[RMDB]
RNA sequence: GGGAACGACUCGAGUAGAGUCGAAAAACUGUGCACCGUCACUCCUGCUAUCCAUUUUAGUGGGGCGUAGAAAGUAGCACACUGCGCCAACAUCCACUACAUGCACUGUAUCCAGCUAGAGUCGACCUGAUUGAAGCAUGUUCGCAUGCUUCAAUCAAAAAGAAACAACAACAACAAC
Reactivity to DMS in 0.01 (KOAc 150mM, MgCl2 10mM, bicine 150mM(pH8.5), 24C), signal-to-noise 3, nucleotides 027 to 126: a110c100u000g010u010g020c040a090c070c070g000u010c120a060c080u000c020c010u000g010c050u000a090u000c120c060a100u000u000u000u000a000g000u000g050g020g020g030c060g050u000a020g010a080a070a100g020u000a090g040c050a100c170a190c040u000g020c020g020c000c010a120a080c170a200u020c020c010a030c060u040a050c260a040u000g010c070a030c040u000g000u010a060u000c030c020a160g020c070u000a080g000a020g000u000c010g060a170c020c040
Reactivity to 2A3 in 0.01 (KOAc 150mM, MgCl2 10mM, bicine 150mM(pH8.5), 24C), signal-to-noise 3, nucleotides 027 to 126: a000c030u050g000u050g030c040a040c050c030g070u070c010a010c050u030c000c000u040g010c020u060a070u090c030c040a120u080u120u050u040a030g010u010g080g030g000g000c030g000u000a020g090a070a080a030g110u130a020g050c030a020c000a000c100u010g000c000g020c010c000a020a060c030a100u040c010c000a010c020u040a060c010a030u090g000c050a000c080u070g030u070a060u010c030c030a020g000c020u020a030g020a000g030u010c010g020a080c000c010